[RMDB]
RNA sequence: GGGAACGACUCGAGUAGAGUCGAAAACCAACGUGGUUCGCCACGUUGGAAACAACAAAUACUGUCAGUUGAGACAGACACAAAAACUGUCAGUGAAGACAGAAAGGCGGUCCUUCGGGACCGCCAACUCAUAAAACACGUUCGCGUGUUUUAUGAGAAAAGAAACAACAACAACAAC
Reactivity to 2A3 in 0.01 (KOAc 150mM, MgCl2 10mM, bicine 150mM(pH8.5), 24C), signal-to-noise 3, nucleotides 027 to 126: c000c000a000a000c000g000u000g000g030u030u050c140g060c080c010a000c000g000u010u020g000g000a030a030a010c010a010a030c000a010a080a040u210a210c020u010g010u010c030a130g030u110u150g110a040g020a100c020a010g040a030c030a010c010a160a120a010a040a020c010u010g000u000c000a020g110u050g200a110a020g020a030c010a000g050a110a050a020g010g010c010g020g000u020c000c000u010u130c230g030g000g010a000c000c000g000c010c000a010a000
Reactivity to DMS in 0.01 (KOAc 150mM, MgCl2 10mM, bicine 150mM(pH8.5), 24C), signal-to-noise 3, nucleotides 027 to 126: c010c000a010a000c020g020u000g000g020u010u010c240g060c010c000a000c000g000u000u000g000g000a030a070a050c080a090a090c100a090a080a130u010a150c000u000g010u000c020a170g000u010u000g010a160g000a020c000a020g010a100c150a090c200a070a070a040a060a050c010u000g000u000c010a070g030u020g010a100a090g000a000c000a020g000a020a090a090g010g010c000g000g000u000c000c000u000u000c200g030g040g020a010c000c000g010c010c000a000a000